[RMDB]
Conditions: 150 mM KOAc, 10 mM MgCl2 and 150 mM bicine (pH 8.5), 24 C.
Chemical mapping of a 177-nucleotide RNA with DMS and 2A3.
Values cover nucleotides 27 to 126.
For 2A3, 1,464 sequencing reads were counted.
The data come from the RNA Mapping Database (RMDB), library M2PK90.

RNA sequence: GGGAACGACUCGAGUAGAGUCGAAAAAUAAACCGGAAGCGACGCAGCAAGCCCGACCGGAAGGGCAACCGGAAUGCGUAUCUCAACUCGCCGGAGACGCACCUGAGAGACGGGAAUGCGUAAAAAACUACCGUUAUCAGUUCGCUGAUAACGGUAGAAAAGAAACAACAACAACAAC
Reactivity to DMS in 0.01 (KOAc 150mM, MgCl2 10mM, bicine 150mM(pH8.5), 24C), signal-to-noise 2, nucleotides 027 to 126: a050u000a030a100a170c040c000g000g010a140a130g020c100g010a010c040g010c040a040g000c090a150a130g000c050c000c000g020a140c000c040g010g000a110a090g010g000g000c020a060a110c020c000g000g010a120a050u000g010c010g010u000a080u000c130u010c080a050a110c060u010c010g010c010c080g010g000a080g010a080c050g040c050a020c030c040u060g000a140g000a070g000a100c070g020g000g000a070a100u000g000c020g000u020a000a000a020a060a040a100
Reactivity to 2A3 in 0.01 (KOAc 150mM, MgCl2 10mM, bicine 150mM(pH8.5), 24C), signal-to-noise 1, nucleotides 027 to 126: a000u080a030a050a020c010c000g040g010a080a000g120c040g100a000c050g000c050a070g000c050a180a010g030c000c000c040g040a090c010c040g070g060a050a040g070g000g000c000a000a030c030c030g020g000a020a100u080g000c020g010u040a110u050c100u050c030a020a140c030u030c050g090c020c010g050g000a050g040a040c050g010c030a100c010c010u070g010a130g000a010g010a100c050g010g040g000a050a100u060g020c010g000u080a120a050a000a030a030a000